[RMDB]
RNA sequence: GGGAACGACUCGAGUAGAGUCGAAAACGGCAGUGGCAUGUUAUCCGUACGUUAUGUGCGGAAUCGCAUCCUAUAAGCGUAGAUGCGAUGUCCGUAGAUGUGCAAGUGAGUAUCCCUGCUCCUAGCAUCUAGUCUAGCGGUUCGCUGCUAGGCUAGAAAAAGAAACAACAACAACAAC
Reactivity to DMS in 0.01 (KOAc 150mM, MgCl2 10mM, bicine 150mM(pH8.5), 24C), signal-to-noise 9, nucleotides 027 to 126: c170g000g010c080a040g010u030g010g010c130a030u000g000u010u020a080u010c040c080g010u000a020c030g020u010u020a070u030g020u000g000c000g000g000a050a010u000c010g000c000a000u000c100c060u010a080u020a100a160g020c270g010u010a050g000a020u000g000c000g000a000u010g010u010c000c000g000u000a050g000a040u010g010u010g000c020a080a100g010u040g010a050g010u010a070u000c000c000c000u010g000c000u000c010c010u000a080g010c120a110
Reactivity to 2A3 in 0.01 (KOAc 150mM, MgCl2 10mM, bicine 150mM(pH8.5), 24C), signal-to-noise 9, nucleotides 027 to 126: c020g020g000c010a030g020u060g080g020c060a020u030g010u030u070a050u030c020c010g010u020a010c010g020u070u110a080u190g150u050g000c000g000g000a000a000u000c010g000c000a000u030c010c030u090a060u030a190a080g100c090g060u040a010g010a010u010g000c000g000a010u020g160u040c000c000g000u000a010g000a050u030g010u010g000c010a030a070g030u050g120a010g000u020a030u030c000c000c000u000g000c000u010c000c000u010a020g020c010a020